[RMDB]
RNA sequence: GGGAACGACUCGAGUAGAGUCGAAAAGAGACGGACGGCGGUGUCCAUGCUGGUCAGCAGGAAACUCGCGAGGACCAGCGCCAUAAACGGUGCCGCGUACUCGAACGGGAUACCGAACGCGGUCAGGAUCAUGACCCGACUUCGGUCGGGUCAUGAUAAAAGAAACAACAACAACAAC
Reactivity to DMS in 0.01 (KOAc 150mM, MgCl2 10mM, bicine 150mM(pH8.5), 24C), signal-to-noise 1, nucleotides 027 to 126: g000a000g060a010c030g020g010a140c100g030g000c000g000g000u000g010u000c030c000a300u080g000c000u040g000g000u000c000a070g010c020a060g000g000a080a060a230c110u000c120g070c000g000a120g010g000a030c000c020a020g000c010g000c020c030a100u030a120a110a120c200g100g020u000g010c060c000g030c000g060u000a140c170u050c010g000a040a130c160g030g000g020a040u100a110c030c000g030a100a040c060g000c000g030g000u000c000a030g000g000
Reactivity to 2A3 in 0.01 (KOAc 150mM, MgCl2 10mM, bicine 150mM(pH8.5), 24C), signal-to-noise 1, nucleotides 027 to 126: g070a010g060a020c030g070g000a000c060g050g190c020g000g020u040g000u000c000c000a010u080g040c010u010g000g010u040c000a010g000c000a000g050g020a070a080a200c020u150c110g000c030g070a090g100g120a000c000c090a000g000c000g010c000c000a200u220a060a180a090c200g100g010u070g000c000c010g020c020g010u020a120c010u070c060g000a080a000c090g020g000g030a040u010a200c020c040g130a030a000c020g000c000g060g040u000c030a100g140g020

An RNA of 177 nucleotides, treated with DMS and 2A3 and read out base by base. Conditions: 150 mM KOAc, 10 mM MgCl2 and 150 mM bicine (pH 8.5), 24 C. Reactivities are given for positions 27 through 126. It was measured as part of the RMDB library OK1LIB.